[RMDB]
RNA sequence: GGGAACGACUCGAGUAGAGUCGAAAAGGGUUAGCGUUCGCGCUAACCCCAGGAUCGAACAUGUCAAAUCUCGCAGACAUGAAACGAUCAAAUGCGAGAAAACUAGACAGUCAUUCGUGACUGUCAAAUAGGCUUUUAUGUUCGCAUAAAAGCCUAUAAAAGAAACAACAACAACAAC
Reactivity to 2A3 in 0.01 (KOAc 150mM, MgCl2 10mM, bicine 150mM(pH8.5), 24C), signal-to-noise 1, nucleotides 027 to 126: g010g010g000u010u010a010g000c000g000u000u000c210g000c000g000c150u020a000a010c000c000c000c000a020g000g170a060u080c030g020a030a080c020a020u010g010u020c010a060a130a300u050c040u000c020g000c020a000g010a030c000a010u010g010a100a060a000c050g050a040u140c100a010a050a050u080g000c010g010a020g040a030a030a010a030c080u100a060g000a000c010a000g030u020c000a010u050u060c150g090u030g030a000c000u000g000u010c000a000a000
Reactivity to DMS in 0.01 (KOAc 150mM, MgCl2 10mM, bicine 150mM(pH8.5), 24C), signal-to-noise 1, nucleotides 027 to 126: g010g000g000u010u000a000g030c000g010u000u010c300g020c050g020c000u000a000a000c000c000c020c040a030g000g000a110u010c010g010a090a300c020a010u000g000u000c010a080a080a090u000c000u000c050g000c030a130g000a070c000a040u000g010a010a140a090c150g000a040u000c130a030a060a090u000g010c010g030a000g000a030a130a080a130c240u000a160g000a010c000a020g000u000c000a050u000u000c240g020u000g000a000c000u000g000u010c000a000a020
Structure probing data (2A3 and DMS) for a 177-nucleotide construct. The DMS profile rests on 856 reads. Values cover nucleotides 27 to 126. For 2A3, 1,241 sequencing reads were counted. The reactions ran in a buffer of 150 mM KOAc, 10 mM MgCl2 and 150 mM bicine (pH 8.5), at 24 C.